This 177-nucleotide RNA was probed chemically with DMS and 2A3.
For DMS the reverse transcriptase was MarathonRT.
The RNA was probed in 150 mM KOAc, 10 mM MgCl2 and 150 mM bicine (pH 8.5) at 24 C.
The data come from the RNA Mapping Database (RMDB), library OK2TRN.
For 2A3, 1,300 sequencing reads were counted.

RNA sequence: GGGAACGACUCGAGUAGAGUCGAAAAUGGAGGGUGUGCUCGUUUCCGUGAUCAGAAAGGGCUACAUGCUGAUCGACGAGGAUCGAUGAAGGAAUCAGGCAUGAGGGAUUCUCUUUUCCUCCCUGUGCGCGUGACGUUAAUUCGUUAACGUCACGCGAAAAGAAACAACAACAACAAC
Reactivity to DMS in 0.01 (KOAc 150mM, MgCl2 10mM, bicine 150mM(pH8.5), 24C), signal-to-noise 2, nucleotides 027 to 126: u010g010g050a140g020g010g050u000g000u010g010c090u000c010g020u000u000u010c020c000g030u010g020a050u000c060a020g010a040a080a120g010g000g010c040u000a070c040a070u010g010c030u000g010a030u000c010g000a040c060g020a160g030g000a070u000c020g000a040u020g000a090a100g010g000a060a050u000c000a090g000g020c290a100u030g010a150g000g010g000a060u000u000c050u010c050u000u000u000u000c030c070u000c000c020c040u000g020u000g010
Reactivity to 2A3 in 0.01 (KOAc 150mM, MgCl2 10mM, bicine 150mM(pH8.5), 24C), signal-to-noise 2, nucleotides 027 to 126: u110g050g000a010g050g000g000u060g030u080g050c000u020c040g080u000u040u000c000c000g020u070g010a050u060c030a020g110a110a100a050g050g120g020c000u100a050c050a030u140g040c030u040g000a020u000c010g140a090c050g100a160g050g090a050u070c050g000a020u100g040a120a010g090g000a010a070u050c030a060g030g100c030a070u090g020a040g070g060g000a020u120u040c070u030c000u040u030u010u030c020c020u020c010c020c030u110g060u080g080